An RNA of 177 nucleotides, treated with 2A3 and DMS and read out base by base. For DMS the reverse transcriptase was MarathonRT. The RNA was probed in 150 mM KOAc, 10 mM MgCl2 and 150 mM bicine (pH 8.5) at 24 C. Reactivities are given for positions 27 through 126.

RNA sequence: GGGAACGACUCGAGUAGAGUCGAAAAAUCCUUCACCAUCGAAAGCGGCGCUAAAGGCCCGGCAGCUGGCAACGUAACUUCUCUGUAAGUUCAAGCCGCUAAGAAUCGAGAAUCCCUGCCUGAUGGCCUAACGGAUGAUAUUCGUAUCAUCCGUUAGAAAAGAAACAACAACAACAAC
Reactivity to 2A3 in 0.01 (KOAc 150mM, MgCl2 10mM, bicine 150mM(pH8.5), 24C), signal-to-noise 9, nucleotides 027 to 126: a000u040c010c000u040u080c050a060c030c010a070u060c020g040a080a070a020g040c020g020g000c010g010c110u140a130a090a090g080g020c000c000c000g060g010c010a020g020c040u100g020g000c020a040a020c060g050u110a010a020c020u040u010c160u020c090u170g230u300a020a000g000u010u010c030a070a020g000c000c000g000c000u010a010a030g040a020a050u090c070g010a000g040a090a020u030c010c000c000u010g010c000c020u110g070a120u180g030g000c000
Reactivity to DMS in 0.01 (KOAc 150mM, MgCl2 10mM, bicine 150mM(pH8.5), 24C), signal-to-noise 7, nucleotides 027 to 126: a090u010c020c010u020u010c050a100c070c050a080u010c020g010a080a150a060g010c020g010g010c060g020c130u020a060a120a140g000g010c010c010c080g040g010c070a060g010c040u000g010g000c050a070a090c150g000u030a020a010c010u000u000c020u050c140u020g020u040a010a020g000u000u000c050a130a150g000c010c010g010c010u000a040a130g010a100a100u010c050g010a060g010a160a080u010c030c010c010u010g000c030c020u000g000a100u030g010g010c090